[RMDB]
RNA sequence: GGGAACGACUCGAGUAGAGUCGAAAACCUUUUCCCGCCAAGAACUUAUAGACCAGGAGAAAGAACUCCUUGAGAAGUUGGCGUGGCGAACAGAGGCAGUCUUAGCGACGGACGUCACUUCCUUCUUAAUCAAGAAUUGGUUCGCCAAUUCUUGAUUAAAAGAAACAACAACAACAAC
Reactivity to DMS in 0.01 (KOAc 150mM, MgCl2 10mM, bicine 150mM(pH8.5), 24C), signal-to-noise 1, nucleotides 027 to 126: c050c030u010u000u010u000c020c000c020g030c050c010a100a070g000a050a060c090u020u000a100u000a100g020a200c160c110a010g000g020a080g050a070a200a130g030a060a210c020u000c000c020u010u000g020a110g040a060a140g000u000u000g020g030c130g000u020g000g000c060g000a050a080c140a050g020a150g000g030c060a080g030u000c020u000u010a150g000c040g000a050c060g000g000a140c040g020u000c030a060c050u000u010c010c000u010u020c140u000u000
Reactivity to 2A3 in 0.01 (KOAc 150mM, MgCl2 10mM, bicine 150mM(pH8.5), 24C), signal-to-noise 1, nucleotides 027 to 126: c000c000u030u050u000u050c080c010c010g040c010c010a100a040g080a130a090c030u070u050a040u120a240g070a070c000c050a010g020g010a020g000a040a230a020g120a090a090c010u030c000c000u000u070g060a080g010a080a070g020u080u060g000g040c020g040u070g020g030c010g040a040a050c010a040g070a120g120g040c030a010g030u030c030u100u140a070g000c070g040a030c020g020g030a000c020g000u030c010a040c010u070u060c000c010u010u060c000u000u050
About this RNA
The record gives the reactivity of an RNA of 177 nucleotides to DMS and 2A3. Source: RMDB library RFMREP, as collected in RNAgym. Conditions: 150 mM KOAc, 10 mM MgCl2 and 150 mM bicine (pH 8.5), 24 C. The DMS profile rests on 691 reads.